Record summary
Chemical mapping of a 207-nucleotide RNA with DMS and 2A3. The reactions ran in a buffer of 150 mM KOAc, 10 mM MgCl2 and 150 mM bicine (pH 8.5), at 24 C.
RNA sequence: GGGAACGACUCGAGUAGAGUCGAAAAAUGUUUCCUGAGCGAAGGCUCGGGUGAUGUGAGCUUUAGAAUCGGGGGGCAAUGCGUUAGGCUGGUUUCACAGAGCUGCGAAAACCUCUACCUCUCGACUGUGGAAGGAUUACAAGCCGGAGUGUCUUAGACCAUGACUAUACUUCGGUAUAGUCAUGGUAAAAGAAACAACAACAACAAC
Reactivity to DMS in 0.01 (KOAc 150mM, MgCl2 10mM, bicine 150mM(pH8.5), 24C), signal-to-noise 1, nucleotides 027 to 156: a100u000g010u020u000u010c020c000u000g010a090g000c070g010a210a110g010g020c010u000c000g030g030g010u000g040a080u000g040u000g000a090g000c020u000u010u010a090g020a080a110u000c010g010g000g020g020g020g000c040a060a100u020g020c050g020u000u020a070g020g000c030u010g020g000u000u010u000c040a010c110a060g020a170g000c070u010g070c050g000a100a030a050a070c010c030u010c040u000a030c020c010u000c030u000c000g000a070c050u000g020u000g010g010a070a020g000g010a150u000u000a010c050a010a230g000c020c010g020g000a120g030u010g000u000c020u010u000a130g000
Reactivity to 2A3 in 0.01 (KOAc 150mM, MgCl2 10mM, bicine 150mM(pH8.5), 24C), signal-to-noise 1, nucleotides 027 to 156: a000u050g030u030u010u030c010c000u020g000a010g010c080g150a210a070g220g000c000u000c000g000g000g000u120g010a080u090g000u070g030a030g080c000u130u110u100a110g080a170a100u130c040g010g010g000g000g000g000c020a050a030u050g000c060g010u020u020a060g030g020c020u090g050g040u010u090u040c030a040c010a030g060a000g100c050u000g000c030g050a110a000a000a000c010c010u000c000u020a000c010c010u030c000u000c060g060a030c110u060g010u030g090g030a080a090g020g000a020u020u060a060c000a100a030g000c000c000g040g000a020g060u050g010u000c000u010u040a040g050